Background: Structure probing data (2A3 and DMS) for a 177-nucleotide construct.
RNA sequence: GGGAACGACUCGAGUAGAGUCGAAAAUGUUUUGUUUUGAAUAGGAGGAAAAGCUGUUUUUGUGUUUCUCCUUAUACUAUGCUCAAUCAGCUAGUCAUUCCAUGGCUUUAAGAUUACAAUGUACUUGUUAUUUACUUGGUUUCGACCAAGUAAAUAAAAAAGAAACAACAACAACAAC
Reactivity to 2A3 in 0.01 (KOAc 150mM, MgCl2 10mM, bicine 150mM(pH8.5), 24C), signal-to-noise 5, nucleotides 027 to 126: u070g020u000u050u040u010g020u000u030u000u040g090a100a080u040a080g000g020a030g010g090a040a030a070a050g040c020u020g180u140u150u080u240u120g050u020g020u020u060u000c010u010c000c000u000u000a000u000a010c020u020a040u130g020c010u020c080a040a060u010c000a020g040c030u010a000g030u040c020a060u180u110c150c060a050u040g020g000c010u040u040u170a090a010g020a030u020u040a030c070a080a090u110g030u050a070c060u040u040g020
Reactivity to DMS in 0.01 (KOAc 150mM, MgCl2 10mM, bicine 150mM(pH8.5), 24C), signal-to-noise 8, nucleotides 027 to 126: u010g010u000u000u000u000g010u000u000u010u010g010a110a090u010a030g010g010a020g010g000a030a040a080a120g010c060u000g010u010u010u020u020u010g010u010g010u000u000u000c010u000c020c010u000u010a080u000a060c040u010a100u010g000c100u000c140a050a050u000c090a070g010c110u000a020g010u000c050a060u010u020c120c120a090u010g010g020c030u010u000u000a130a110g000a060u000u010a090c090a040a130u010g010u000a050c150u010u010g010